RNA sequence: GGGAACGACUCGAGUAGAGUCGAAAAUGUUGAUUUUAAGAUCGACGUGAAAGAGGCGAAAUUCGUCGAAAUCAAGCACGACGACUACGUGGAUGAGGACGAUGAAGCCGUCGAAGUGUCGUCGGAACUGACUCACCCAGUUCGCUGGGUGAGUCAGAAAAGAAACAACAACAACAAC
Reactivity to DMS in 0.01 (KOAc 150mM, MgCl2 10mM, bicine 150mM(pH8.5), 24C), signal-to-noise 2, nucleotides 027 to 126: u000g000u000u000g040a060u000u030u000u030a100a150g040a080u010c010g010a000c030g030u000g000a010a030a190g010a260g010g060c000g000a090a110a100u000u000c000g010u000c000g000a030a260a130u000c040a060a080g000c100a020c000g010a160c170g000a090c300u030a030c060g000u010g000g000a180u000g000a050g040g030a300c000g000a060u000g000a080a050g030c090c030g010u010c000g010a040a130g030u000g000u000c000g000u000c000g000g000a090a110
Reactivity to 2A3 in 0.01 (KOAc 150mM, MgCl2 10mM, bicine 150mM(pH8.5), 24C), signal-to-noise 1, nucleotides 027 to 126: u080g000u000u040g020a180u040u050u000u220a110a050g040a120u010c020g040a010c050g000u030g080a020a110a040g120a060g050g040c030g060a060a060a090u100u010c000g000u000c010g030a020a000a030u020c020a000a000g080c030a010c040g090a000c030g000a040c140u160a050c080g010u040g070g100a070u010g030a010g120g000a010c010g000a000u100g050a010a020g050c060c000g010u000c010g000a020a010g090u090g020u110c010g000u000c020g000g000a010a050
This 177-nucleotide RNA was probed chemically with DMS and 2A3. Reactivities are rounded to 0.1 and cut off at 0 and 3. Conditions: 150 mM KOAc, 10 mM MgCl2 and 150 mM bicine (pH 8.5), 24 C. The 2A3 profile rests on 776 reads.